Description
The record gives the reactivity of an RNA of 177 nucleotides to DMS.
RNA sequence: GGGAACGACUCGAGUAGAGUCGAAAAGAGGAAACAAGCCACUAACCCUGAAAGGGCCAAACAUUGAAAUGGCCCUGAAUUUUGGGAGCUCAAGCCCAGGUGUGGCUUUUUCAGGGAGACUCUAGGAAUAUAGGGUCUGGUUCGCCAGACCCUAUAUAAAAGAAACAACAACAACAAC
Reactivity to DMS in 0.01 (KOAc 150mM, MgCl2 10mM, bicine 150mM(pH8.5), 24C), signal-to-noise 1, nucleotides 027 to 126: g000a110g000g000a010a110a030c130a020a060g010c040c010a040c070u010a100a120c060c000c060u010g020a120a170a000g010g010g050c030c000a020a070a140c080a230u000u020g020a040a120a190u000g020g040c000c000c000u040g020a040a110u000u010u010u020g000g000g010a150g010c120u000c170a020a090g000c140c030c030a020g000g020u020g010u000g010g010c000u000u000u000u000u000c000a110g000g010g010a100g000a110c060u030c020u020a090g050g010a200
For DMS the reverse transcriptase was MarathonRT. Reactivities are given for positions 27 through 126. It was measured as part of the RMDB library OK2TST.